[RMDB]
Record summary: Chemical mapping of a 177-nucleotide RNA with DMS and 2A3. 2A3 adducts were read by reverse transcription with SuperScript II with manganese. DMS adducts were read by reverse transcription with MarathonRT.

RNA sequence: GGGAACGACUCGAGUAGAGUCGAAAAGAUAUGGACCCAUCCCACUUGUCGAUGAAAUCGGAAACGAUGGAGACAAUGUGGGAGUGGGUCCUAAGUCAAAACGCUAGAAUCUUCGGAUUCUAGCGAACAACAUCACCGUGUUCGCACGGUGAUGUUGAAAAGAAACAACAACAACAAC
Reactivity to DMS in 0.01 (KOAc 150mM, MgCl2 10mM, bicine 150mM(pH8.5), 24C), signal-to-noise 2, nucleotides 027 to 126: g000a050u010a300u010g000g000a030c000c000c000a060u000c000c010c000a020c010u000u000g010u000c000g000a110u050g000a070a120a010u000c010g020g000a160a150a250c010g020a000u000g000g000a080g000a030c000a000a010u020g010u000g000g000g000a000g020u010g000g000g030u000c000c000u000a000a080g000u010c020a060a070a120a160c020g050c000u010a000g010a000a010u000c000u010u030c260g020g000a010u000u000c000u000a010g010c000g010a000a070
Reactivity to 2A3 in 0.01 (KOAc 150mM, MgCl2 10mM, bicine 150mM(pH8.5), 24C), signal-to-noise 2, nucleotides 027 to 126: g020a030u070a050u150g010g030a000c000c010c000a040u010c010c000c000a000c000u000u010g010u000c040g300a300u040g050a030a030a000u010c030g010g060a040a030a030c020g000a010u010g010g030a010g000a000c020a000a070u300g010u030g000g000g000a010g010u000g010g000g040u000c000c010u000a010a010g020u000c000a000a000a050a120c030g030c020u010a000g000a000a010u000c000u060u160c300g110g010a020u040u000c010u000a000g000c010g020a010a010